About this RNA: Structure probing data (DMS and 2A3) for a 177-nucleotide construct. High DMS reactivity at an A or C suggests that its Watson-Crick edge is free. For 2A3 the reverse transcriptase was SuperScript II with manganese. Source: RMDB library OK2TST, as collected in RNAgym. As a SHAPE reagent, 2A3 marks flexible, mostly unpaired nucleotides at the ribose 2'-OH.
RNA sequence: GGGAACGACUCGAGUAGAGUCGAAAAAGAGAGCUGGAGAUCGAGCGCGACAUGGUGAUACGCUCUAAGACGGCCCUCCGCCUAUCCUUCCUUAGCGGCGAAAUACGCCCAGACGCGUACAGAACAGCCAUCGAACAGUUUUCGAACUGUUCGAUGGAAAAGAAACAACAACAACAAC
Reactivity to DMS in 0.01 (KOAc 150mM, MgCl2 10mM, bicine 150mM(pH8.5), 24C), signal-to-noise 2, nucleotides 027 to 126: a080g020a070g010a100g020c000u010g010g010a090g000a080u020c200g020a080g020c030g010c040g010a110c090a220u010g020g030u000g020a150u030a050c040g020c020u000c000u010a080a090g050a160c040g000g010c030c000c000u000c030c020g000c010c030u000a120u020c080c050u010u010c040c020u000u000a060g000c080g010g000c010g000a030a060a190u000a060c040g000c010c010c010a110g000a090c100g020c020g010u040a090c140a030g010a100a110c140a150g010
Reactivity to 2A3 in 0.01 (KOAc 150mM, MgCl2 10mM, bicine 150mM(pH8.5), 24C), signal-to-noise 1, nucleotides 027 to 126: a000g020a010g020a020g000c040u060g000g040a070g000a110u120c070g000a020g040c000g000c010g040a040c090a170u200g070g070u210g120a040u030a150c040g020c000u000c000u010a060a040g070a050c060g000g000c000c020c010u010c000c000g000c000c010u060a060u110c000c010u040u090c010c010u060u080a030g060c070g070g010c000g020a140a000a000u130a090c010g000c000c000c050a070g020a080c030g000c000g080u040a060c020a010g110a070a020c020a030g000